Source information: The record gives the reactivity of an RNA of 207 nucleotides to 2A3.
[RMDB]
RNA sequence: GGGAACGACUCGAGUAGAGUCGAAAAUCUAUUGACGCUGGGACAGCGUCCGCGAGGUCGAAGAACUACUGAAGCGCGCACGGUAGGGAGACCUCGAACUACGGACGCAAUGUCCUGUGCUGAAGCGCGCACGGCAACCGAAAGGUGCGUUGUGGACCCAUGUAACCUAGUUCGCUAGGUUACAUGGAAAAGAAACAACAACAACAAC
Reactivity to 2A3 in 0.01 (KOAc 150mM, MgCl2 10mM, bicine 150mM(pH8.5), 24C), signal-to-noise 3, nucleotides 027 to 156: u080c040u040a120u090u280g010a000c000g000c020u030g000g000g010a010c020a300g300c300g000u020c000c000g030c000g000a000g010g000u010c030g040a280a030g000a040a030c000u000a000c000u030g030a190a000g000c010g000c010g000c000a000c020g020g000u000a000g000g020g030a040g000a010c000c010u000c000g000a000a010c040u240a060c030g000g000a000c000g000c020a020a010u010g000u010c000c010u010g000u000g000c000u010g000a080a020g000c000g000c000g000c000a010c000g000g000c000a010a000c000c010g050a060a040a040g000g000u010g020c010g010u000u040g010u030g030g030a040c010
Source information:
Conditions: 150 mM KOAc, 10 mM MgCl2 and 150 mM bicine (pH 8.5), 24 C. The data come from the RNA Mapping Database (RMDB), library RNAMAK.